[RMDB]
RNA sequence: GGGAACGACUCGAGUAGAGUCGAAAAGGGGUCAAACCGAGGCGAUUGCCACAGCAACAGCUAUACUGAAGCCUCCACGGUAUAGACAUGCUGUGGGAUCGCUGUUUGACGUUUGACGGAGGCACCCAAAACAUUCUGAGUUUCGACUCAGAAUGAACGAUAAAUUCAUCUUCGGAUGAAUUUAUCGAAAAGAAACAACAACAACAAC
Reactivity to DMS in 0.01 (KOAc 150mM, MgCl2 10mM, bicine 150mM(pH8.5), 24C), signal-to-noise 1, nucleotides 027 to 156: g000g040g010g000u010c010a040a040a090c010c080g000a060g020g010c000g010a020u000u000g020c000c050a030c000a020g030c010a080a060c100a160g010c030u000a000u000a030c020u000g000a010a170g000c060c000u000c000c010a300c060g030g000u000a010u000a020g020a050c050a280u000g000c000u020g040u010g020g010g000a000u000c030g040c030u000g010u020u000u020g010a070c260g010u000u000u000g010a040c020g000g060a060g100g090c040a160c020c020c000a030a080a170a300c030a040u000u000c000u010g000a020g000u000u000u020c280g010a090c010u010c000a030g000a010a010u010g010a060a160
Reactivity to 2A3 in 0.01 (KOAc 150mM, MgCl2 10mM, bicine 150mM(pH8.5), 24C), signal-to-noise 5, nucleotides 027 to 156: g000g010g070g030u010c010a010a010a000c030c020g030a070g010g000c010g000a020u020u090g300c000c020a010c020a010g000c050a110a160c050a220g000c010u010a000u000a010c000u030g060a150a020g020c000c000u000c010c000a000c000g000g010u000a000u010a000g070a030c150a230u300g000c000u000g000u010g000g000g000a000u000c000g000c000u000g000u020u070u120g000a000c010g000u000u010u010g010a010c000g000g010a000g000g000c000a030c000c010c010a050a100a020a030c010a010u010u000c000u000g000a000g010u050u110u210c190g180a040c010u000c000a000g010a000a000u000g010a040a020